Description:
This 177-nucleotide RNA was probed chemically with 2A3 and DMS. The 2A3 profile rests on 1,450 reads. The reactions ran in a buffer of 150 mM KOAc, 10 mM MgCl2 and 150 mM bicine (pH 8.5), at 24 C.

RNA sequence: GGGAACGACUCGAGUAGAGUCGAAAACAAAGCCGCUUCGGCGGCUUUGAAAGAUGCAUUUUACGCCAAGAAAUCCCGGAACAUUCGCCCGUUAGCGGGAGAAAACCUAUGCGUUCGCGCAUAGGAAGAACCUAUAUUCCUUCGGGAAUAUAGGUUCAAAAGAAACAACAACAACAAC
Reactivity to 2A3 in 0.01 (KOAc 150mM, MgCl2 10mM, bicine 150mM(pH8.5), 24C), signal-to-noise 1, nucleotides 027 to 126: c000a000a000a000g020c000c010g000c050u070u050c180g210g000c040g010g030c040u000u000u010g000a000a030a000g040a020u100g020c010a010u010u110u130u300a080c080g020c010c030a000a080g050a100a110a040u030c010c010c000g020g050a050a030c050a170u050u060c020g030c000c040c020g010u040u080a080g150c060g030g020g020a020g020a010a030a000a020c010c000u000a000u010g000c000g000u000u060c250g000c000g020c090a010u000a000g000g000a010a010
Reactivity to DMS in 0.01 (KOAc 150mM, MgCl2 10mM, bicine 150mM(pH8.5), 24C), signal-to-noise 2, nucleotides 027 to 126: c000a000a000a010g010c000c000g060c020u000u000c270g050g040c000g000g000c020u000u000u000g000a050a080a100g040a110u000g030c030a090u000u020u020u020a110c170g000c090c070a090a080g010a110a190a110u000c000c010c000g010g000a080a030c100a200u000u010c040g000c000c000c000g010u000u000a150g000c010g010g000g000a050g000a050a100a170a120c000c000u000a000u000g000c000g020u000u000c180g020c000g000c000a000u000a000g000g010a040a030